[RMDB]
RNA sequence: GGGAACGACUCGAGUAGAGUCGAAAAGCAUCAGGCCUGGUCCGGCCAACCCAGGGAGACGUGCGCUUGAUGGCCUUGCAGAACCCAGAUGGCUAUGAGGCGGUGGACCUCGAUCCGUACGGGUCCCCUGCCAAUCGCAUUUCGAUGCGAUUGGCAGAAAAGAAACAACAACAACAAC
Reactivity to DMS in 0.01 (KOAc 150mM, MgCl2 10mM, bicine 150mM(pH8.5), 24C), signal-to-noise 1, nucleotides 027 to 126: g010c070a060u000c130a070g010g010c010c010u020g020g010u010c090c060g020g020c070c010a090a060c130c050c010a050g040g010g000a120g040a110c030g010u020g040c120g010c060u000u000g030a060u010g000g000c000c040u000u010g020c090a130g010a060a160c020c010c010a110g000a090u000g010g010c060u040a050u020g020a080g010g000c010g020g000u010g000g020a060c050c020u000c020g000a010u010c080c020g000u010a130c080g000g000g020u000c000c000c060
Reactivity to 2A3 in 0.01 (KOAc 150mM, MgCl2 10mM, bicine 150mM(pH8.5), 24C), signal-to-noise 1, nucleotides 027 to 126: g040c010a030u030c050a070g050g040c010c030u130g050g000u060c030c000g070g000c010c020a080a090c000c000c050a070g070g000g000a080g010a010c050g050u090g000c020g020c020u030u040g130a060u130g070g000c020c050u040u080g000c050a070g030a100a030c010c010c000a010g040a120u100g010g030c030u050a000u160g050a040g050g000c090g000g160u110g080g050a080c020c020u070c050g010a050u100c000c020g030u010a030c020g090g000g070u040c040c000c000